[RMDB]
RNA sequence: GGGAACGACUCGAGUAGAGUCGAAAAGUUAUGCUCUCGCUGCCUAAUGGCGGUGCGGGAAACCCACUCUAAUGUCCUUAGGGUUAGCCCCUUAAGGCGGGGUUCGGAGGCACCUGGCAACAGAAGCUGAAACUGUGCACAUUCGUGUGCACAGUAAGUACGUCAUUCAUUUCGAUGAAUGACGUACAAAAGAAACAACAACAACAAC
Reactivity to DMS in 0.01 (KOAc 150mM, MgCl2 10mM, bicine 150mM(pH8.5), 24C), signal-to-noise 1, nucleotides 027 to 156: g050u010u000a000u010g030c000u000c000u000c000g140c000u010g020c000c000u000a100a070u000g070g020c000g050g030u000g000c000g040g030g020a070a100a220c000c000c090a130c110u000c110u010a060a100u000g010u010c070c010u000u010a040g030g030g000u000u000a260g010c190c180c000c000u000u030a070a010g050g070c090g000g000g040g040u000u010c000g020g010a300g030g020c020a020c000c030u010g000g020c070a040a110c030a090g000a040a090g010c020u010g000a220a040a060c010u050g050u010g010c000a050c000a150u010u020c300g030u020g060u000g000c000a000c030a030g000u000a010a090
Reactivity to 2A3 in 0.01 (KOAc 150mM, MgCl2 10mM, bicine 150mM(pH8.5), 24C), signal-to-noise 4, nucleotides 027 to 156: g080u140u100a100u290g050c020u000c000u000c010g030c010u030g000c010c020u270a300a260u290g040g000c060g010g070u050g000c020g000g000g030a090a040a040c000c000c000a040c010u110c040u100a210a180u080g120u190c020c000u000u020a000g010g000g010u030u030a030g050c020c010c030c000u030u050a030a010g010g000c000g000g010g000g000u060u130c080g070g020a040g020g010c000a010c010c010u040g220g000c000a010a010c000a030g020a020a010g000c020u020g020a080a020a000c010u000g000u000g000c000a020c000a010u050u150c230g140u020g000u000g030c000a000c000a000g000u010a000a000